[RMDB]
RNA sequence: GGGAACGACUCGAGUAGAGUCGAAAAAUACUUCUCAGGAUGGCGCGUUGCAGUCCGACAAGAUCCAGGGACUGUACAGAAUUUUCCUAUACCUCGAGUCGGGUUUGGAAUCUAAGGUUGACUCGCUAAAACUUUACGUGGUUCGCCACGUAAAGAACAAACCAACUAAGUUCGCUUAGUUGGUUUGAAAAGAAACAACAACAACAAC
Reactivity to 2A3 in 0.01 (KOAc 150mM, MgCl2 10mM, bicine 150mM(pH8.5), 24C), signal-to-noise 5, nucleotides 027 to 156: a000u090a030c030u050u040c020u030c040a030g080g020a060u100g030g040c020g000c040g100u090u080g000c010a010g010u000c020c000g080a100c070a080a080g060a160u090c050c080a050g010g000g030a000c000u000g010u040a020c020a020g160a160a080u040u040u050u020c010c000u050a050u050a130c010c010u030c040g000a010g020u020c020g020g020g000u030u040u040g020g020a020a010u020c030u080a120a050g140g030u100u110g040a010c010u020c030g000c040u040a060a070a080a120c000u000u010u000a000c000g010u010g010g010u030u030c130g030c060c000a000c000g000u000a000a000a000g000a010a010
Reactivity to DMS in 0.01 (KOAc 150mM, MgCl2 10mM, bicine 150mM(pH8.5), 24C), signal-to-noise 3, nucleotides 027 to 156: a120u000a070c050u000u010c010u000c030a140g000g010a060u010g010g030c070g010c070g010u010u010g020c000a080g020u000c010c000g020a300c020a090a140g050a110u000c060c020a130g000g010g000a050c010u000g010u000a110c100a120g010a100a100u010u010u000u000c020c000u010a110u000a090c060c010u000c030g010a040g020u000c020g020g010g010u000u010u000g020g010a060a050u000c040u000a100a120g010g010u000u010g010a060c050u000c010g040c050u000a030a050a150a150c000u000u010u000a010c000g010u000g010g010u000u010c300g010c020c000a000c000g010u000a000a000a020g000a060a130